[RMDB]
RNA sequence: GGGAACGACUCGAGUAGAGUCGAAAACAGAUCAACACGUGGAUACCGAAGUUCGGUCAAUGAUCCCUCAGUGAGUGUAAACCAAACACGUGAGGAGUCAGACGCAGUGUGAUCAGCAACGGUCCCGACUCCGUAUUUCUCACCGGUUGUCCACCGCAAUAUAGGGGAUCUUCGGAUCCCCUAUAUUAAAAGAAACAACAACAACAAC
Reactivity to DMS in 0.01 (KOAc 150mM, MgCl2 10mM, bicine 150mM(pH8.5), 24C), signal-to-noise 2, nucleotides 027 to 156: c040a130g030a060u000c010a050a070c010a050c020g010u000g010g010a110u000a100c030c020g000a130a220g040u010u000c030g000g010u000c030a110a110u020g000a070u000c010c000c020u000c020a120g000u020g030a110g030u010g010u030a120a040a190c160c070a030a140a180c030a040c030g000u020g000a050g040g030a000g010u000c020a070g000a090c040g050c020a110g000u050g020u000g030a060u010c060a130g020c050a100a060c040g010g010u020c000c020c120g010a040c010u020c000c020g000u000a110u000u000u000c070u000c020a080c100c000g010g000u000u000g020u000c000c040a100c010c020g010c140
Reactivity to 2A3 in 0.01 (KOAc 150mM, MgCl2 10mM, bicine 150mM(pH8.5), 24C), signal-to-noise 1, nucleotides 027 to 156: c030a000g020a040u060c060a020a060c030a050c140g120u050g000g020a070u090a130c000c030g030a170a040g120u210u200c070g000g030u030c000a040a040u070g000a040u060c020c010c000u000c030a070g010u080g180a040g000u050g020u200a140a170a070c060c010a160a090a010c040a010c060g000u050g060a000g040g020a020g000u040c030a010g000a070c050g000c190a130g000u010g000u060g050a170u050c050a010g060c020a020a040c040g040g000u040c000c050c050g020a040c010u010c000c010g090u080a090u010u190u030c060u000c040a070c050c030g030g000u000u110g020u010c010c000a000c000c070g090c030
This 207-nucleotide RNA was probed chemically with DMS and 2A3. It was measured as part of the RMDB library OK3TST. For DMS the reverse transcriptase was MarathonRT.